[RMDB]
RNA sequence: GGGAACGACUCGAGUAGAGUCGAAAAGAUAUGGAGGAUCGAAGAACUAACGUAACAUCCUUCGGAAACGAAGGUGGUUAGGGAGAUCGCUCCUAAGUCAAAAGGUACGAGGUUCGCCUCGUACCAAUCCUACCACCCAGUUCGCUGGGUGGUAGGAAAAAGAAACAACAACAACAAC
Reactivity to 2A3 in 0.01 (KOAc 150mM, MgCl2 10mM, bicine 150mM(pH8.5), 24C), signal-to-noise 1, nucleotides 027 to 126: g010a020u090a060u140g020g000a010g010g000a010u010c000g160a300a090g010a080a010c000u000a000a010c000g020u050a000a040c020a220u300c010c020u020u010c000g000g010a080a090a010c000g010a000a000g000g040u020g010g000u040u000a000g010g010g000a030g030a000u000c030g090c110u000c000c000u030a110a030g050u040c040a080a140a030a030g030g010u000a000c010g000a010g050g000u020u130c160g120c060c000u000c000g000u030a000c000c000a000a000
Reactivity to DMS in 0.01 (KOAc 150mM, MgCl2 10mM, bicine 150mM(pH8.5), 24C), signal-to-noise 2, nucleotides 027 to 126: g020a030u010a300u020g010g030a020g010g000a030u000c000g000a110a170g030a170a170c000u000a000a000c000g010u000a040a040c200a020u020c010c000u000u000c000g010g000a130a130a150c010g000a030a010g000g000u000g010g000u000u000a020g000g000g000a040g010a010u010c000g010c010u010c000c010u000a020a070g000u000c030a060a040a080a150g000g010u000a010c000g000a000g000g000u000u020c290g010c000c000u000c000g000u000a000c010c000a050a030
Annotation:
Structure probing data (2A3 and DMS) for a 177-nucleotide construct. For DMS, 1,522 sequencing reads were counted. Conditions: 150 mM KOAc, 10 mM MgCl2 and 150 mM bicine (pH 8.5), 24 C. Source: RMDB library TTRDEL, as collected in RNAgym.